[RMDB]
RNA sequence: GGGAACGACUCGAGUAGAGUCGAAAAUGUGUGUGUAAAAACCCUAAUGCUUUGUCAGCAUUACAUGUCAAACAAAAUGCAAUGUACUUUGUUUAUCCUGUGCUUGAUGGCUCCAGCUACGGCCCACAGUGCAAUACAGAUUCGUCUGUAUUGCACUAAAAGAAACAACAACAACAAC
Reactivity to DMS in 0.01 (KOAc 150mM, MgCl2 10mM, bicine 150mM(pH8.5), 24C), signal-to-noise 5, nucleotides 027 to 126: u010g020u000g030u000g030u000g010u000a070a070a090a120a070c030c020c040u010a050a040u000g010c020u010u000u010g000u020c250a090g000c000a020u000u000a030c100a070u010g010u010c120a060a060a070c080a030a030a040a070u000g020c050a070a060u000g010u000a050c080u000u000u010g010u000u000u010a090u000c030c030u000g000u000g020c050u000u000g000a090u000g010g000c030u000c030c040a040g000c040u010a060c110g010g000c010c020c030a060c210
Reactivity to 2A3 in 0.01 (KOAc 150mM, MgCl2 10mM, bicine 150mM(pH8.5), 24C), signal-to-noise 4, nucleotides 027 to 126: u060g030u010g010u020g000u030g030u080a040a020a010a070a120c010c000c010u020a020a020u050g020c010u060u100u130g130u300c040a010g000c010a000u000u050a020c030a040u140g050u100c070a070a050a020c020a020a110a040a010u080g020c040a050a110u160g020u100a040c030u000u060u040g050u100u080u040a060u060c010c010u040g010u040g060c020u040u060g030a030u060g090g020c000u020c030c010a010g000c010u030a040c050g040g010c020c010c000a060c010